An RNA of 207 nucleotides, treated with 2A3 and read out base by base.
For 2A3 the reverse transcriptase was SuperScript II with manganese.
RNA sequence: GGGAACGACUCGAGUAGAGUCGAAAACAUCAGUCACGAGACCGUCUUGCCACUGGGCCUGGCCGAUGCUGUCGUCCUCGUCUCGACGCCCGAACCCGCUGCCGUCAACGACACGAAAAAGACGGUCGAACUGACCGAACGCUCCGGCGGCGAUGUCGGCACUGAUGCAAUUCGUUGCAUCAGUGCCAAAAGAAACAACAACAACAAC
Reactivity to 2A3 in 0.01 (KOAc 150mM, MgCl2 10mM, bicine 150mM(pH8.5), 24C), signal-to-noise 1, nucleotides 027 to 156: c030a060u070c030a020g020u030c010a010c160g160a070g020a170c020c000g000u000c010u020u080g060c030c000a050c170u200g000g040g030c030c010u020g020g020c020c030g150a080u080g020c070u020g030u030c000g000u000c070c010u020c000g130u000c000u030c070g030a030c000g020c000c000c000g110a070a040c050c000c000g030c010u020g020c000c000g040u070c080a080a000c040g030a000c020a020c080g150a080a270a010a000a000g020a020c020g020g000u000c010g000a000a000c020u020g000a000c010c000g030a030a020c050g000c040u110c140c140g050g000c000g000g000c030g030a020u080g030u160c120
The reactions ran in a buffer of 150 mM KOAc, 10 mM MgCl2 and 150 mM bicine (pH 8.5), at 24 C. The data come from the RNA Mapping Database (RMDB), library OK3TST.